Chemical mapping of a 177-nucleotide RNA with DMS and 2A3. As a SHAPE reagent, 2A3 marks flexible, mostly unpaired nucleotides at the ribose 2'-OH. The RNA was probed in 150 mM KOAc, 10 mM MgCl2 and 150 mM bicine (pH 8.5) at 24 C. The 2A3 profile rests on 4,759 reads. DMS adducts were read by reverse transcription with MarathonRT.
RNA sequence: GGGAACGACUCGAGUAGAGUCGAAAAAAGGUGCCAAGCUGGAAUGCAGCAGGGAGCUCAGUGAUCUCCUCGAGGGCUGUGAAGACACCAUUGAGGCUCGCUUGGGGGAUAGCCCGGAUGUCACAUCUAAUAGUCUAAGGUUCGCCUUAGACUAUUAAAAAGAAACAACAACAACAAC
Reactivity to DMS in 0.01 (KOAc 150mM, MgCl2 10mM, bicine 150mM(pH8.5), 24C), signal-to-noise 7, nucleotides 027 to 126: a080a070g000g010u000g010c010c030a080a150g010c070u000g010g010a130a100u010g010c010a040g020c040a170g010g000g010a060g010c070u010c060a140g020u010g000a040u000c060u000c010c010u000c110g010a140g000g010g010c040u000g010u000g010a120a100g000a060c040a040c020c020a140u000u000g010a240g000g000c090u000c050g010c040u010u000g010g010g000g000g000a140u010a090g010c020c010c020g010g000a070u000g000u010c080a080c100a070u000c080
Reactivity to 2A3 in 0.01 (KOAc 150mM, MgCl2 10mM, bicine 150mM(pH8.5), 24C), signal-to-noise 4, nucleotides 027 to 126: a000a000g030g000u010g000c010c010a050a020g080c080u170g050g090a250a090u280g020c020a020g020c000a010g040g000g010a010g010c020u020c120a150g070u060g190a090u020c010u010c020c010u020c030g110a150g070g190g000c040u010g020u020g060a060a050g050a030c010a000c010c020a000u010u070g050a040g010g010c000u000c020g040c030u020u020g010g000g010g010g030a060u100a060g020c020c020c040g010g010a050u070g070u180c080a030c010a190u020c020